[RMDB]
The record gives the reactivity of an RNA of 170 nucleotides to DMS and 2A3.
Values cover nucleotides 27 to 129.
The 2A3 profile rests on 34,905 reads.
Conditions: 150 mM KOAc, 10 mM MgCl2 and 150 mM bicine (pH 8.5), 24 C.
DMS adducts were read by reverse transcription with MarathonRT.
2A3 adducts were read by reverse transcription with SuperScript II with manganese.
RNA sequence: GGGAACGACUCGAGUAGAGUCGAAAACACAUCUUAAGCAUGGCGGUGGUAUCGCUGGUGCUAUUAAUGCGGCUUCAAAAGGGGCUGUCCAAAAAGAGUCAGAUGAGUAUAUUCUGGCUAAAGGGCCUAGGUCAAGGGUUCGCCCUUGACAAAAGAAACAACAACAACAAC
Reactivity to DMS in 0.01 (KOAc 150mM, MgCl2 10mM, bicine 150mM(pH8.5), 24C), signal-to-noise 5, nucleotides 027 to 129: c060a010c100a000u020c150u070u040a050a070g040c040a000u000g050g000c050g050g000u040g030g030u090a070u030c010g030c030u000g000g080u000g020c030u020a060u040u020a040a030u040g000c070g000g030c050u030u040c000a070a080a150a150g070g010g000g030c000u000g000u020c070c060a060a090a030a130a100g000a000g030u040c010a030g000a020u030g010a130g010u050a090u030a030u020u000c010u020g000g000c000u000a010a100a070g040g000g010c020c010u010a080g010
Reactivity to 2A3 in 0.01 (KOAc 150mM, MgCl2 10mM, bicine 150mM(pH8.5), 24C), signal-to-noise 9, nucleotides 027 to 129: c070a010c000a060u060c040u130u150a050a000g000c000a010u040g010g000c010g000g030u090g080g130u210a040u130c010g000c030u040g090g000u020g000c020u030a070u070u170a040a040u060g020c010g010g000c000u030u030c060a080a110a090a100g030g000g010g000c020u030g030u040c020c010a090a050a000a010a010g080a000g020u020c010a000g000a020u050g040a060g230u090a060u030a030u170u030c010u000g000g000c000u030a060a030a040g040g010g010c010c010u030a030g090